[RMDB]
RNA sequence: GGGAACGACUCGAGUAGAGUCGAAAAGGCGGGCGUUUCCGUGCUUUGACCAGCCCGAUAUGAAGGCGACGUUCAAGAUUUCGAUUGACGCGGGGUCGAAGUUUACUGUGCUGGCGAACACACAGGCGAUGUAUUUACCGUUCGCGGUAAAUACAUCAAAAGAAACAACAACAACAAC
Reactivity to 2A3 in 0.01 (KOAc 150mM, MgCl2 10mM, bicine 150mM(pH8.5), 24C), signal-to-noise 9, nucleotides 027 to 126: g070g000c000g000g010g010c030g010u020u030u020c010c000g030u040g030c030u060u040u050g020a070c010c010a000g020c000c000c010g040a080u090a110u300g120a070a040g030g020c040g030a060c040g060u070u150c060a050a030g020a180u070u120u130c070g050a080u010u080g020a030c030g020c020g040g060g010g010u000c000g010a030a010g000u010u090u080a100c030u030g030u050g050c060u020g040g040c060g080a150a020c030a000c010a000c010a040g050g040c050
Reactivity to DMS in 0.01 (KOAc 150mM, MgCl2 10mM, bicine 150mM(pH8.5), 24C), signal-to-noise 5, nucleotides 027 to 126: g020g020c060g010g000g020c090g020u010u000u000c020c010g020u020g020c030u010u000u000g010a050c060c040a240g000c020c020c040g000a140u050a090u030g000a090a080g020g000c040g010a080c060g010u010u010c060a050a090g010a120u010u020u020c120g010a060u020u020g010a070c100g010c020g020g010g010g010u000c010g000a050a060g010u000u030u030a060c030u010g000u010g010c140u000g010g020c110g020a060a080c060a100c070a050c040a050g010g000c220
An RNA of 177 nucleotides, treated with 2A3 and DMS and read out base by base. The DMS profile rests on 12,488 reads. For 2A3 the reverse transcriptase was SuperScript II with manganese.